[RMDB]
RNA sequence: GGGAACGACUCGAGUAGAGUCGAAAAGCGGUGGUCACCCACUCGCACGGGUAGCCUGCGACUUGCUGCGCGUGGCCCUAAGCAAUGAAGAUGACACUUGAGAGAGGUUCCACUCUGCAGAGACAUCUAGUAUCCAGGCAUUCGUGCCUGGAUACUAAAAAGAAACAACAACAACAAC
Reactivity to 2A3 in 0.01 (KOAc 150mM, MgCl2 10mM, bicine 150mM(pH8.5), 24C), signal-to-noise 3, nucleotides 027 to 126: g000c000g030g060u080g020g030u170c050a070c010c010c000a000c010u060c000g000c000a020c030g020g000g030u060a020g090c020c030u040g020c040g030a040c010u070u050g090c110u050g000c130g010c020g020u010g000g050c000c040c000u030a070a020g010c010a010a130u170g030a080a040g000a010u040g020a020c010a020c040u040u050g020a020g000a000g000a020g030g140u040u050c000c000a050c010u050c000u040g060c060a060g010a010g030a150c010a080u020c030
Reactivity to DMS in 0.01 (KOAc 150mM, MgCl2 10mM, bicine 150mM(pH8.5), 24C), signal-to-noise 1, nucleotides 027 to 126: g000c020g000g000u000g030g000u000c080a030c300c000c000a010c050u000c020g000c000a020c000g020g010g030u000a060g030c010c000u050g080c040g010a180c020u000u000g000c230u030g080c030g000c160g090u000g000g000c200c000c000u000a200a120g000c000a020a200u040g060a300a180g040a000u000g000a300c070a000c000u010u000g000a070g000a000g000a040g000g000u000u000c080c040a150c140u050c000u030g000c030a000g000a080g030a120c120a090u000c090
About this RNA
Conditions: 150 mM KOAc, 10 mM MgCl2 and 150 mM bicine (pH 8.5), 24 C. An RNA of 177 nucleotides, treated with 2A3 and DMS and read out base by base. As a SHAPE reagent, 2A3 marks flexible, mostly unpaired nucleotides at the ribose 2'-OH. It was measured as part of the RMDB library RFM100. Values cover nucleotides 27 to 126.